[RMDB]
RNA sequence: GGGAACGACUCGAGUAGAGUCGAAAAACUGCCAUACGUGGCAGAAACACGCCUUACCAGGACUAAACAGCGUGUCUAAAAAACAGUCCUUCAUAUCUGAUCUGGAGGGUAGAUCAGGAAUACUAAAAAAAUCGGGUGAAGUUCGCUUCACCCGAAACUCUUUCUCGAACUUCGGUUCGAGAAAGAGAAAAGAAACAACAACAACAAC
Reactivity to 2A3 in 0.01 (KOAc 150mM, MgCl2 10mM, bicine 150mM(pH8.5), 24C), signal-to-noise 1, nucleotides 027 to 156: a000c010u000g000c000c000a020u030a050c160g100u050g000g030c000a000g000a000a010a000c000a000c000g000c000c000u040u090a020c030c040a020g000g000a010c010u070a120a040a010c010a000g000c000g000u000g010u020c120u060a020a020a010a000a000a000c040a000g000u000c040c000u000u080c020a050u020a060u120c000u010g000a010u010c000u020g050g070a060g110g000g090u130a000g000a010u020c030a000g030g000a010a020u210a110c070u210a060a010a090a080a000a030a130u030c000g000g010g010u000g000a020a000g020u040u110c110g000c080u000u000c000a000c000c000c000g000a000a000a000